[RMDB]
RNA sequence: GGGAACGACUCGAGUAGAGUCGAAAACGCGAGCUCGCUCUUCAGGCAGAAGUCCUGGAAGCCACCGAGAGCGACGGCGCUGUGGGUGCCCAUUCCGACGCCCAUCGGCUGUGCCGCCACGACGGUGGCAUAGGAUCACGUUCGCGUGAUCCUAUGCAAAAGAAACAACAACAACAAC
Reactivity to 2A3 in 0.01 (KOAc 150mM, MgCl2 10mM, bicine 150mM(pH8.5), 24C), signal-to-noise 9, nucleotides 027 to 126: c080g020c020g020a020g040c020u020c030g020c010u020c040u070u040c010a020g010g010c030a070g120a300a020g130u160c000c000u030g010g030a070a020g020c010c010a010c010c030g030a050g010a010g060c030g030a010c010g000g010c030g010c030u020g000u030g020g000g010u020g030c030c060c010a040u200u090c060c070g030a060c020g040c010c000c000a060u140c090g040g000c030u090g080u160g110c010c010g020c030c010a060c050g110a010c020g010g010u010g000
Reactivity to DMS in 0.01 (KOAc 150mM, MgCl2 10mM, bicine 150mM(pH8.5), 24C), signal-to-noise 5, nucleotides 027 to 126: c070g020c040g000a090g020c120u010c050g020c040u000c030u000u010c020a050g000g000c030a240g010a120a160g010u030c000c000u000g010g000a080a110g020c000c010a020c020c020g010a060g010a200g000c020g000a060c010g010g000c030g010c020u000g040u030g000g010g010u000g000c040c050c090a150u010u030c100c110g000a170c020g000c000c000c000a030u030c140g020g000c040u010g010u030g000c000c020g010c040c020a090c050g010a230c030g010g020u000g010

The record gives the reactivity of an RNA of 177 nucleotides to 2A3 and DMS. 2A3 adducts were read by reverse transcription with SuperScript II with manganese. Conditions: 150 mM KOAc, 10 mM MgCl2 and 150 mM bicine (pH 8.5), 24 C. Reactivities are given for positions 27 through 126.